[RMDB]
RNA sequence: GGGAACGACUCGAGUAGAGUCGAAAAUACUGUGGCGGUACUCUCCGAGCUGCGGUCGGUGAGCGCCCGCGAAGGCGACGGCGCUACGUUCGAGUGCACCGUGUCGGAGGUCGAGACCACGGGGCGCAACAGACCGUAAGUUCGCUUACGGUCUGUUAAAAGAAACAACAACAACAAC
Reactivity to 2A3 in 0.01 (KOAc 150mM, MgCl2 10mM, bicine 150mM(pH8.5), 24C), signal-to-noise 3, nucleotides 027 to 126: u090a030c020u020g000u020g000g000c040g040g040u160a020c040u050c000u020c290c000g010a040g040c050u090g000c050g030g100u000c020g000g060u130g030a000g010c000g030c000c030c010g000c010g040a090a070g150g000c030g010a080c050g040g010c000g000c010u100a200c020g040u050u270c050g050a130g220u070g000c030a020c070c060g020u010g170u040c000g010g000a010g010g010u020c010g020a070g040a100c000c010a010c000g000g000g020g000c080g000c010
Reactivity to DMS in 0.01 (KOAc 150mM, MgCl2 10mM, bicine 150mM(pH8.5), 24C), signal-to-noise 2, nucleotides 027 to 126: u000a050c040u010g010u000g000g000c000g010g020u010a030c030u020c010u000c000c000g000a070g010c110u000g000c020g000g000u000c010g010g010u020g000a040g000c000g020c010c010c020g000c010g000a180a120g010g000c000g030a140c140g010g010c000g030c010u000a030c040g010u000u020c040g010a080g000u000g010c080a040c110c100g000u000g010u000c010g000g010a030g010g010u000c020g000a200g000a080c010c010a010c030g010g000g000g000c070g000c120
Structure probing data (2A3 and DMS) for a 177-nucleotide construct. For 2A3 the reverse transcriptase was SuperScript II with manganese. Values cover nucleotides 27 to 126. The RNA was probed in 150 mM KOAc, 10 mM MgCl2 and 150 mM bicine (pH 8.5) at 24 C. DMS adducts were read by reverse transcription with MarathonRT. The DMS profile rests on 6,242 reads.